Notes
Chemical mapping of a 177-nucleotide RNA with 2A3 and DMS.

RNA sequence: GGGAACGACUCGAGUAGAGUCGAAAAGCUCUAGGAGACUAGAGCGAUACGUUAGAGAGCUCGUGGAAUGACUAACGGAUAGCCAGGUACGAGGUUGCCAGAGGACAUAGCUAUAGCUAUGUCCAAAGAGGUAACAUACGUUCGCGUAUGUUACCUCAAAAGAAACAACAACAACAAC
Reactivity to 2A3 in 0.01 (KOAc 150mM, MgCl2 10mM, bicine 150mM(pH8.5), 24C), signal-to-noise 3, nucleotides 027 to 126: g000c010u000c000u000a010g030g050a100g040a150c000u020a000g020a000g000c010g000a000u020a010c020g000u050u040a020g010a000g010a020g120c030u050c120g030u060g020g060a040a050u090g010a010c000u000a050a010c050g060g030a050u060a010g120c040c010a030g020g010u050a060c070g030a150g000g060u050u010g010c030c030a050g040a060g120g000a000c000a000u000a000g000c000u100a050u020a300g000c000u000a000u010g010u010c000c000a000a000a000
Reactivity to DMS in 0.01 (KOAc 150mM, MgCl2 10mM, bicine 150mM(pH8.5), 24C), signal-to-noise 3, nucleotides 027 to 126: g000c000u000c000u000a010g000g000a230g000a140c010u000a000g000a020g050c020g000a050u020a020c050g020u000u000a030g010a100g000a100g010c000u010c040g010u000g030g020a090a040u020g000a090c000u020a060a030c030g040g010a050u000a040g000c030c010a080g000g020u020a060c070g020a050g000g010u000u000g020c060c070a150g000a300g000g000a010c000a000u000a010g010c000u020a160u040a120g020c000u000a000u000g000u000c000c000a010a020a050